[RMDB]
This 177-nucleotide RNA was probed chemically with DMS and 2A3. For 2A3 the reverse transcriptase was SuperScript II with manganese. Conditions: 150 mM KOAc, 10 mM MgCl2 and 150 mM bicine (pH 8.5), 24 C. DMS adducts were read by reverse transcription with MarathonRT.
RNA sequence: GGGAACGACUCGAGUAGAGUCGAAAAGAUAUGGAGUGACGAAACGCAACAGCCAGACUUCGGAAACGAAGUUCUGGACAUGCGUAGUCACUCCUAAGUCAAACGUCUCUUGUUCGCAAGAGACGAAUCCGAGAUAGUUGUUCGCAACUAUCUCGGAAAAAGAAACAACAACAACAAC
Reactivity to DMS in 0.01 (KOAc 150mM, MgCl2 10mM, bicine 150mM(pH8.5), 24C), signal-to-noise 2, nucleotides 027 to 126: g020a010u000a100u000g000g000a030g040u000g000a020c030g000a120a200a100c000g010c000a170a130c210a190g000c000c000a000g000a020c000u000u000c010g000g000a020a020a110c000g050a000a000g000u000u000c020u000g000g010a010c060a110u000g000c000g010u000a110g000u000c010a000c000u010c000c000u000a000a060g000u000c000a140a110a230c030g000u000c000u040c000u000u010g000u010u040c140g070c000a010a000g000a010g010a000c000g000a050a050
Reactivity to 2A3 in 0.01 (KOAc 150mM, MgCl2 10mM, bicine 150mM(pH8.5), 24C), signal-to-noise 2, nucleotides 027 to 126: g010a000u020a000u070g010g000a000g010u000g010a000c110g170a300a300a040c010g130c100a300a290c080a300g000c000c000a010g000a000c000u000u000c000g000g010a010a020a010c000g000a020a000g030u150u000c000u010g000g010a000c000a070u130g060c000g010u020a020g000u000c000a010c000u000c000c000u010a000a010g000u000c030a100a040a080c020g000u000c000u000c000u000u010g150u070u130c300g000c090a020a000g000a010g000a000c000g010a010a060